[RMDB]
RNA sequence: GGGAACGACUCGAGUAGAGUCGAAAAGAUUAUGUGGGAGAUGCGCCCAGUCGUGUCACUGGAAACAGAAUUGCGAGUCGCUCGCCCUAGCGAUAUUGAUGUGUACAGUAGCGUACACUGUGCUACUUUAAGGUAUUAUGACGAUACCACGUCAAAAACCAUCCAUGAUAUUCGUAUCAUGGAUGGUAAAAGAAACAACAACAACAAC
Reactivity to 2A3 in 0.01 (KOAc 150mM, MgCl2 10mM, bicine 150mM(pH8.5), 24C), signal-to-noise 6, nucleotides 027 to 156: g030a030u170u180a060u210g080u090g020g020g000a070g020a040u060g030c010g010c010c010c020a010g050u090c080g040u050g080u100c020a010c040u030g020g040a070a080a010c040a040g090a160a100u120u170g020c020g000a010g020u010c000g010c020u010c030g080c000c010c010u000a010g020c000g050a020u030a080u160u110g080a100u090g050u000g010u010a030c010a070g060u070a010g060c030g020u020a020c050a010c060u030g020u050g020c020u020a050c000u050u090u110a080a020g030g000u030a050u110u040a100u130g070a020c050g000a000u010a040c020c020a030c030g020u020c010a020a030a010a020
Reactivity to DMS in 0.01 (KOAc 150mM, MgCl2 10mM, bicine 150mM(pH8.5), 24C), signal-to-noise 3, nucleotides 027 to 156: g000a160u000u010a070u000g020u000g010g020g020a160g020a100u000g020c020g000c110c040c020a080g000u000c100g040u000g020u000c040a120c040u020g010g000a140a100a160c050a110g000a090a090u010u010g020c030g020a080g010u010c030g030c010u000c040g020c000c020c020u010a080g030c080g010a060u000a060u020u000g000a040u000g030u010g000u000a070c090a080g020u000a070g020c060g020u000a140c070a080c030u010g020u000g000c030u000a050c070u010u000u000a040a080g040g020u000a040u010u000a100u020g010a140c130g010a090u000a040c020c010a110c060g010u000c050a030a050a100a210